[RMDB]
RNA sequence: GGGAACGACUCGAGUAGAGUCGAAAAUGCCAAAACACUGAGGAAAGGCCUUGGUAGCUGUGUGUCACUCUGGACUCUGUGGUACAAGGAGAUGGCUCUGACCGUUUGCCGCUGAGGAUGAAGUUCUCCUUUUCCAGAUGGUUUUCACACAGGGUGACACCUAUACCUGAUUCGUCAGGUAUAGGUGAAAAGAAACAACAACAACAAC
Reactivity to DMS in 0.01 (KOAc 150mM, MgCl2 10mM, bicine 150mM(pH8.5), 24C), signal-to-noise 3, nucleotides 027 to 156: u000g010c040c020a100a080a080a060c030a070c040u000g010a060g010g020a130a090a190g030g020c030c010u000u010g000g020u000a090g020c020u010g000u010g020u000g030u000c040a060c040u020c010u000g010g010a100c040u010c060u000g030u000g010g050u000a050c120a080a050g020g010a070g020a050u010g030g000c010u000c070u000g020a080c010c050g000u010u000u000g010c040c050g020c080u000g000a090g000g000a090u000g010a050a120g020u000u000c030u000c010c010u000u000u000u000c010c020a050g000a070u000g010g010u000u000u000u000c030a030c090a150c040a050g020g000g020u000g020a170
Reactivity to 2A3 in 0.01 (KOAc 150mM, MgCl2 10mM, bicine 150mM(pH8.5), 24C), signal-to-noise 6, nucleotides 027 to 156: u110g060c010c000a010a030a020a050c080a010c010u030g000a030g050g080a160a150a070g100g080c010c010u060u030g030g010u060a060g050c030u020g010u000g000u000g020u050c000a010c040u000c000u010g030g000a030c010u020c040u090g060u070g090g030u080a060c050a100a060g030g010a080g040a050u080g060g000c030u020c060u140g130a180c000c030g040u080u150u080g060c030c010g020c050u050g010a020g070g030a100u140g060a100a030g030u070u040c020u060c020c000u000u070u030u010c010c010a040g010a060u070g060g090u040u040u110u080c040a030c000a000c020a030g020g000g010u020g010a000